[RMDB]
RNA sequence: GGGAACGACUCGAGUAGAGUCGAAAACGUCCCCGUCGUACAGAAUGGUAACAUAUCUCUCCAAAUAUCUGAGCUUGGCUAUACGGGGAAACCCAACCCCUUGGGAAGAUUGGGUAUAUGGCUAAAUUACAUCGAUUGUACUUCGGUACAAUCGAAACCUAGCUAAGGUCUUCGGACCUUAGCUAGGAAAAGAAACAACAACAACAAC
Reactivity to 2A3 in 0.01 (KOAc 150mM, MgCl2 10mM, bicine 150mM(pH8.5), 24C), signal-to-noise 2, nucleotides 027 to 156: c020g080u010c000c010c000c010g040u010c030g040u060a080c030a070g050a070a140u040g010g060u100a150a000c020a060u140a210u100c030u020c000u030c120c060a140a200a090u150a150u080c040u020g030a010g020c030u020u130g020g000c030u070a040u010a170c060g000g000g000g000a030a060a080c000c000c010a000a070c000c000c000c000u030u130g030g010g000a040a030g030a050u010u030g020g000g040u020a020u000a010u060g070g000c030u110a030a070a100u160u140a030c020a070u040c010g010a000u000u000g000u000a000c000u030u040c100g100g000u000a000c000a000a000u010c000g000a000a000a020